RNA sequence: GGGAACGACUCGAGUAGAGUCGAAAAGUACUACCGUUCGCGGUAGUACAAAUAAUCCAGCCUGGAUAGGCUGGAGCCAAAACUAUGGUAAAGGCACCAUAGAAAGAGCAGAGUUCGCUCUGCUCAAUCCUGAUGUAUAGUUCGCUAUACAUCAGGAAAAAGAAACAACAACAACAAC
Reactivity to DMS in 0.01 (KOAc 150mM, MgCl2 10mM, bicine 150mM(pH8.5), 24C), signal-to-noise 6, nucleotides 027 to 126: g010u000a000c000u000a000c000c000g020u000u020c260g030c010g010g000u000a010g000u000a000c000a020a070a070u000a090a110u000c000c000a000g000c000c000u010g010g030a080u010a020g000g000c000u000g000g000a020g010c040c030a050a070a100a190c010u000a010u000g000g010u000a080a090a130g010g020c150a050c010c000a010u000a010g000a090a090a100g000a010g010c000a020g000a010g010u000u010c220g010c000u000c000u000g010c000u000c000a050a080
Reactivity to 2A3 in 0.01 (KOAc 150mM, MgCl2 10mM, bicine 150mM(pH8.5), 24C), signal-to-noise 3, nucleotides 027 to 126: g000u000a000c000u000a000c010c010g010u030u060c250g000c000g090g010u010a000g000u000a000c000a000a000a000u040a010a010u010c010c000a000g010c000c010u170g170g200a220u200a210g010g000c000u000g000g000a000g020c010c000a030a120a030a050c010u010a000u020g010g000u100a110a180a230g240g040c080a000c010c010a010u010a010g080a080a140a010g010a000g000c010a000g000a000g010u040u090c150g050c060u000c000u000g000c000u000c000a010a020